Structure probing data (DMS and 2A3) for a 177-nucleotide construct. The 2A3 profile rests on 4,366 reads. The reactions ran in a buffer of 150 mM KOAc, 10 mM MgCl2 and 150 mM bicine (pH 8.5), at 24 C.

RNA sequence: GGGAACGACUCGAGUAGAGUCGAAAAUUAAAGCGCGAAAAAGAUCGAUCGAUCGUUUGAACGCGCAAGUCCAAGUUUGAUACGGGCAUACUAGCUAGCUAGCUAGCAAAACAAACUUCGUAAAAAACUAUGCACAAUGAUUCGUCAUUGUGCAUAGAAAAGAAACAACAACAACAAC
Reactivity to DMS in 0.01 (KOAc 150mM, MgCl2 10mM, bicine 150mM(pH8.5), 24C), signal-to-noise 4, nucleotides 027 to 126: u000u020a080a140a110g030c000g000c000g020a040a090a020a060a040g000a000u000c000g000a150u020c210g000a000u000c000g010u000u010u000g010a150a100c010g000c000g010c000a030a060g010u000c010c020a060a040g010u000u000u000g010a160u020a080c120g010g010g020c110a150u010a080c020u000a050g010c010u000a120g020c130u000a080g010c000u010a000g010c080a040a060a060a070c090a050a030a030c040u000u000c110g030u020a000a040a040a070a050a110
Reactivity to 2A3 in 0.01 (KOAc 150mM, MgCl2 10mM, bicine 150mM(pH8.5), 24C), signal-to-noise 3, nucleotides 027 to 126: u100u080a090a080a000g010c010g000c010g040a060a070a000a020a000g020a010u020c050g080a120u130c160g000a010u000c060g070u030u080u080g050a140a030c020g000c000g000c000a020a000g010u000c020c000a030a010g020u020u030u030g070a050u080a090c050g040g000g020c040a020u070a080c020u010a000g010c000u020a040g100c010u040a010g000c000u020a000g010c020a060a090a000a010c020a010a050a020c000u100u120c080g070u110a090a090a010a000a000a000